Structure probing data (DMS and 2A3) for a 177-nucleotide construct.
The data come from the RNA Mapping Database (RMDB), library TTRDES.
RNA sequence: GGGAACGACUCGAGUAGAGUCGAAAAGAUAUGGAGUGUUUCGGCCGAUAAGAUGCACUCGGAAACGAGUGGCAUCUUUUGACGGCUGAUCACUCCUAAGUCAAAGACAACACUUCGGUGUUGUCAACCAUCAUCCAUUCUUCGGAAUGGAUGAUGGAAAAGAAACAACAACAACAAC
Reactivity to DMS in 0.01 (KOAc 150mM, MgCl2 10mM, bicine 150mM(pH8.5), 24C), signal-to-noise 3, nucleotides 027 to 126: g010a020u000a300u000g000g000a020g010u000g020u000u000u000c000g030g010c000c000g010a210u010a010a010g000a010u000g000c000a020c000u010c000g010g000a060a060a110c010g010a030g010u000g020g010c000a000u000c000u000u000u000u020g010a190c150g030g000c000u000g010a000u000c000a010c000u010c000c010u000a010a040g010u000c030a140a090a190g000a020c000a000a020c000a000c000u000u010c260g050g000u000g000u000u000g010u000c000a060a130
Reactivity to 2A3 in 0.01 (KOAc 150mM, MgCl2 10mM, bicine 150mM(pH8.5), 24C), signal-to-noise 2, nucleotides 027 to 126: g010a000u050a010u110g010g000a010g000u010g050u030u090u130c000g020g000c020c040g060a100u110a300a010g000a010u000g010c010a010c000u000c010g000g000a050a010a010c000g000a000g020u060g100g090c000a000u020c000u000u020u010u040g080a040c020g000g000c000u000g000a000u000c000a000c000u010c000c000u000a010a010g010u000c030a100a070a000g010a000c000a000a000c000a010c010u070u180c300g100g000u010g000u000u000g000u000c000a000a010

Overview:
For DMS, 3,551 sequencing reads were counted. The RNA was probed in 150 mM KOAc, 10 mM MgCl2 and 150 mM bicine (pH 8.5) at 24 C. For 2A3, 7,481 sequencing reads were counted.